[RMDB]
RNA sequence: GGGAACGACUCGAGUAGAGUCGAAAAAUGGAGAGACUCGACAUCGGCGAUGUUGCCGCCCAGCGCCACCAGAGUUCCUUUCUUCGCCGUCAAGCCGUUCAGCGCGUCGUGAAUUCUCUCCGCCGUCUAGAUAAAGACGGUUCGCCGUCUUUAUCUAAAAAGAAACAACAACAACAAC
Reactivity to DMS in 0.01 (KOAc 150mM, MgCl2 10mM, bicine 150mM(pH8.5), 24C), signal-to-noise 7, nucleotides 027 to 126: a100u010g020g000a030g010a030g010a040c060u000c010g000a030c030a160u000c030g000g010c020g010a060u010g010u000u000g010c060c060g000c060c020c030a090g020c060g010c030c030a060c050c050a090g000a150g010u000u000c010c020u000u000u000c060u000u000c040g000c020c020g010u010c100a080a300g010c030c040g000u010u010c150a110g010c060g020c130g010u000c010g020u010g000a170a110u010u000c010u000c010u000c010c010g000c040c030g000u020c120
Reactivity to 2A3 in 0.01 (KOAc 150mM, MgCl2 10mM, bicine 150mM(pH8.5), 24C), signal-to-noise 4, nucleotides 027 to 126: a010u170g000g010a010g000a000g000a000c010u010c010g010a000c020a060u060c020g020g020c010g020a040u080g060u180u120g050c030c010g030c030c010c000a030g020c020g030c040c010a040c000c020a020g010a020g110u030u060c020c000u030u090u030c030u020u020c020g000c020c000g030u050c040a020a050g020c020c000g070u120u140c070a050g030c010g010c020g070u000c000g000u030g050a060a190u100u000c000u000c010u010c010c010g000c020c010g030u030c050